[RMDB]
RNA sequence: GGGAACGACUCGAGUAGAGUCGAAAAUAAGUGUCUGCAAACAUCUGUGAUUCCUCCCAGACACAUCGCUGGCUGGAGAGGGGACGUCGCUCGAGACGUCUGCAGGGUGAGGCAGCCUCGCUGGCAAAAAUGACAACCUGUUCGCAGGUUGUCAUUUAAAAGAAACAACAACAACAAC
Reactivity to DMS in 0.01 (KOAc 150mM, MgCl2 10mM, bicine 150mM(pH8.5), 24C), signal-to-noise 3, nucleotides 027 to 126: u020a070a060g020u010g010u010c000u000g010c020a040a130a080c030a030u010c020u000g020u000g000a240u020u010c000c000u000c000c020c000a010g010a010c000a010c010a150u010c230g020c170u000g010g000c020u000g000g000a150g030a010g000g000g010g010a010c020g020u010c000g000c220u020c260g020a110g000a010c010g000u000c010u010g010c000a050g000g000g010u000g010a100g000g000c010a040g020c060c020u010c090g020c080u010g000g010c120a020a050
Reactivity to 2A3 in 0.01 (KOAc 150mM, MgCl2 10mM, bicine 150mM(pH8.5), 24C), signal-to-noise 1, nucleotides 027 to 126: u230a030a040g040u010g030u040c010u000g000c010a030a110a140c020a070u050c010u020g070u050g110a210u140u060c030c000u000c020c000c000a000g000a010c010a000c030a090u160c050g060c180u000g000g000c000u000g020g000a210g020a000g180g060g000g000a000c010g010u010c010g000c080u200c120g130a100g000a030c010g000u010c000u030g000c000a000g050g010g000u030g010a060g120g000c010a000g000c000c030u080c030g060c050u060g030g060c030a050a150